[RMDB]
RNA sequence: GGGAACGACUCGAGUAGAGUCGAAAAGAGAAUGUAAGUGGACAAGGGUUGGAUAAUUACGAGUAUAUAUCAAUUGCGAAUCAUAUUGAUUAUGAAAAAUGGAACAAUCAUCAACGAUAUGAAUCAACAGCGUAAUAUGCUUCGGCAUAUUACGCUGAAAAGAAACAACAACAACAAC
Reactivity to 2A3 in 0.01 (KOAc 150mM, MgCl2 10mM, bicine 150mM(pH8.5), 24C), signal-to-noise 1, nucleotides 027 to 126: g040a010g000a030a090u120g020u120a070a100g040u070g050g000a020c020a060a070g010g010g020u000u000g080g000a050u050a110a100u100u120a050c070g020a000g030u020a050u020a020u000a010u270c070a050a090u100u040g060c030g050a020a010u100c000a000u010a000u000u040g080a140u030u100a010u000g120a110a040a000a070a000u120g030g020a050a030c010a030a090u100c020a000u010c020a010a040c010g000a000u050a000u050g020a040a000u010c030a000a050
Reactivity to DMS in 0.01 (KOAc 150mM, MgCl2 10mM, bicine 150mM(pH8.5), 24C), signal-to-noise 1, nucleotides 027 to 126: g010a160g000a140a000u010g000u000a070a170g020u000g000g030a090c100a040a110g000g000g000u000u000g080g020a050u010a020a110u020u020a100c050g000a120g020u000a060u030a070u000a050u020c060a030a070u010u000g010c150g010a070a080u020c010a010u000a020u000u020g000a100u000u010a030u000g010a010a050a020a090a140u030g000g000a100a050c130a150a090u000c040a020u000c120a030a070c050g020a000u040a030u000g020a050a080u000c050a140a130
An RNA of 177 nucleotides, treated with 2A3 and DMS and read out base by base. The 2A3 profile rests on 689 reads. DMS adducts were read by reverse transcription with MarathonRT. Source: RMDB library OK2TST, as collected in RNAgym. 2A3 adducts were read by reverse transcription with SuperScript II with manganese. The DMS profile rests on 836 reads. The reactions ran in a buffer of 150 mM KOAc, 10 mM MgCl2 and 150 mM bicine (pH 8.5), at 24 C.